[RMDB]
RNA sequence: GGGAACGACUCGAGUAGAGUCGAAAAGAGCAGAUCUACCACGACGCACGGCUGGGACCUGACCUGCAGGCUGCCUUGGCCUCGCUGCCGCCGGAGUUUCGUGCCGCGGUGGUGCUGUGUGACAUCGAUUAAGGGUUCCUUUCGAGGAACCCUUAAUAAAAGAAACAACAACAACAAC
Reactivity to DMS in 0.01 (KOAc 150mM, MgCl2 10mM, bicine 150mM(pH8.5), 24C), signal-to-noise 2, nucleotides 027 to 126: g020a140g010c040a060g010a110u000c030u010a180c040c000a060c040g000a110c110g010c060a090c050g030g010c030u010g020g000g000a090c030c040u000g000a100c050c070u000g030c030a050g010g020c050u000g020c110c110u000u010g000g000c010c030u000c040g040c020u000g000c030c060g000c040c050g010g000a090g000u000u000u010c130g020u030g000c010c030g010c030g000g000u000g010g010u000g000c040u010g010u010g010u000g000a130c170a090u000c110g020
Overview: This 177-nucleotide RNA was probed chemically with DMS. For DMS the reverse transcriptase was MarathonRT. In probing experiments dimethyl sulfate is read out at A N1 and C N3, which are open when not base-paired. It was measured as part of the RMDB library OK2TST. Conditions: 150 mM KOAc, 10 mM MgCl2 and 150 mM bicine (pH 8.5), 24 C. Reactivities are given for positions 27 through 126.